[RMDB]
RNA sequence: GGGAACGACUCGAGUAGAGUCGAAAAGUCGGGAUUGUUUAUGGUGGUCGUUAAAGUCAUAACCAUAAGAUGAGCGUUGGAUUGCGGAAGAUCUAUGAAAGUUUAUCAUAGGAUUUGGGCGACCGAGCUAUAAUAAUUAUUUCGAUAAUUAUUAUAGAAAAGAAACAACAACAACAAC
Reactivity to 2A3 in 0.01 (KOAc 150mM, MgCl2 10mM, bicine 150mM(pH8.5), 24C), signal-to-noise 3, nucleotides 027 to 126: g050u060c020g000g020g020a070u020u110g050u090u110u040a000u020g040g020u020g010g010u000c020g030u050u130a080a020a020g020u000c010a010u040a210a080c010c000a010u020a090a050g060a090u070g040a020g020c020g030u050u060g040g050a100u010u130g020c020g010g030a030a000g000a050u000c000u000a010u020g060a070a080a040g090u080u210u260a110u060c010a010u020a020g020g010a010u020u020u090g030g020g010c000g000a010c000c000g020a020g000
Reactivity to DMS in 0.01 (KOAc 150mM, MgCl2 10mM, bicine 150mM(pH8.5), 24C), signal-to-noise 4, nucleotides 027 to 126: g020u010c020g010g010g000a100u020u000g010u030u020u000a020u010g010g020u010g000g010u010c010g010u010u040a080a090a110g010u020c020a020u020a090a110c030c030a040u010a040a050g020a080u010g010a130g010c050g010u010u010g010g010a090u000u010g010c060g000g000a090a060g000a060u010c010u000a020u000g000a040a100a170g010u030u020u020a080u000c000a020u000a040g000g020a040u010u010u020g010g000g010c020g000a100c050c010g030a070g010

Source: RMDB library OK1LIB, as collected in RNAgym. This 177-nucleotide RNA was probed chemically with 2A3 and DMS. The RNA was probed in 150 mM KOAc, 10 mM MgCl2 and 150 mM bicine (pH 8.5) at 24 C. Reactivities are given for positions 27 through 126. For 2A3 the reverse transcriptase was SuperScript II with manganese.